[RMDB]
The record gives the reactivity of an RNA of 207 nucleotides to DMS and 2A3. For 2A3, 1,451 sequencing reads were counted. The DMS profile rests on 1,693 reads. For DMS the reverse transcriptase was MarathonRT. It was measured as part of the RMDB library M2RFPK.
RNA sequence: GGGAACGACUCGAGUAGAGUCGAAAAUUCCAUUUGAGUAUCCUGAAAACGGGCUUUUCAGCAUGGAACGUACAUAUUAAAUAGGAGGAGUGCAUAGUGGCCCGUAUAGCAGGCAUUAACAUUCCUGAAAACGUGAAAAGGUUCGCCUUUUCACGAAGUAUCCUGUAAGGUUCGCCUUACAGGAUACAAAAGAAACAACAACAACAAC
Reactivity to DMS in 0.01 (KOAc 150mM, MgCl2 10mM, bicine 150mM(pH8.5), 24C), signal-to-noise 1, nucleotides 027 to 156: u000u000c010c000a180u000u020u000g020a130g000u000a100u000c020c000u010g000a040a080a090a090c010g000g000g010c110u010u000u020u000c060a160g000c030a030u000g000g000a070a030c050g030u000a130c100a100u000a220u000u000a060a100a140u000a120g020g000a040g010g020a290g020u000g000c040a150u010a110g060u000g030g000c020c000c000g050u000a050u000a130g030c020a060g000g040c100a020u000u000a090a070c060a170u000u000c000c000u020g010a080a010a170a230c040g040u010g000a000a000a000a000g050g010u010u000c300g010c050c000u000u010u010u020c010a000c000g000a010a040
Reactivity to 2A3 in 0.01 (KOAc 150mM, MgCl2 10mM, bicine 150mM(pH8.5), 24C), signal-to-noise 2, nucleotides 027 to 156: u030u010c000c000a020u120u030u060g030a050g000u110a070u100c000c000u010g050a040a020a040a000c030g010g010g010c000u060u040u140u080c050a020g020c010a010u040g000g060a110a010c040g100u250a010c050a080u140a100u250u270a130a160a130u180a070g050g000a050g040g040a140g060u010g010c030a050u090a180g070u030g060g000c010c000c030g010u020a030u000a000g040c000a000g000g000c000a000u020u010a010a020c000a040u070u060c010c020u050g050a040a030a000a070c000g000u000g000a020a000a000a000g000g000u010u040c090g110c000c000u000u010u000u030c020a000c010g000a000a000